[RMDB]
RNA sequence: GGGAACGACUCGAGUAGAGUCGAAAAGAUAUGGAGUCCUGAUGGAGACCGCACAUCGGAAACGAUGUGAUGGUCUAUGAAGUCACAUGGACUCCUAAGUCAAAGUUUCUCAGUUCGCUGAGAAACACUAUUUGACUUGCUUCGGCAAGUCAAAUAGAAAAGAAACAACAACAACAAC
Reactivity to DMS in 0.01 (KOAc 150mM, MgCl2 10mM, bicine 150mM(pH8.5), 24C), signal-to-noise 2, nucleotides 027 to 126: g010a010u000a020u020g000g020a070g010u000c000c000u010g000a020u000g040g020a000g010a000c000c000g000c010a020c000a040u010c000g030g000a020a000a020c000g030a010u000g000u000g000a020u000g080g050u000c000u020a160u010g030a170a290g000u000c030a020c300a100u020g000g000a020c000u010c000c000u000a000a060g000u000c010a060a140a060g000u000u000u000c000u000c000a000g000u000u010c300g020c000u020g000a010g010a030a000a000c000a160
Reactivity to 2A3 in 0.01 (KOAc 150mM, MgCl2 10mM, bicine 150mM(pH8.5), 24C), signal-to-noise 1, nucleotides 027 to 126: g000a010u000a020u030g000g000a010g000u000c010c070u070g060a040u020g000g030a030g010a010c010c010g000c000a010c000a010u000c010g000g000a030a000a000c020g010a000u030g010u040g010a080u060g000g020u040c020u000a100u010g000a000a030g010u030c020a160c060a300u270g030g010a000c020u000c000c000u000a000a000g000u000c000a060a130a040g010u000u010u030c020u010c010a020g040u060u160c290g000c140u010g010a000g100a000a000a000c000a000